[RMDB]
RNA sequence: GGGAACGACUCGAGUAGAGUCGAAAAAGCACGGAAGGAGAUCUUACCUUGGUUUGAGCGCAUUGUUUUGCGGUGGCACCAAAUUGAAUAUCAGCCUCAAAGUACACAAGGCUCUGAGAAAAGUCCGGCGUGCUAUGGCUUUCGAGCCAUAGCACGCAAAAGAAACAACAACAACAAC
Reactivity to 2A3 in 0.01 (KOAc 150mM, MgCl2 10mM, bicine 150mM(pH8.5), 24C), signal-to-noise 1, nucleotides 027 to 126: a000g000c020a000c000g060g040a000a120g080g120a070g000a000u000c000u030u070a010c000c000u090u080g000g080u110u000u000g090a080g050c120g010c060a030u040u040g210u180u050u000u100g000c030g000g010u000g000g140c020a010c000c010a250a000a000u140u180g060a070a020u190a140u110c040a000g090c000c000u000c000a280a000a000g030u090a000c150a020c040a030a030g000g050c010u000c020u020g160a070g020a000a080a010a000g060u000c000c070g100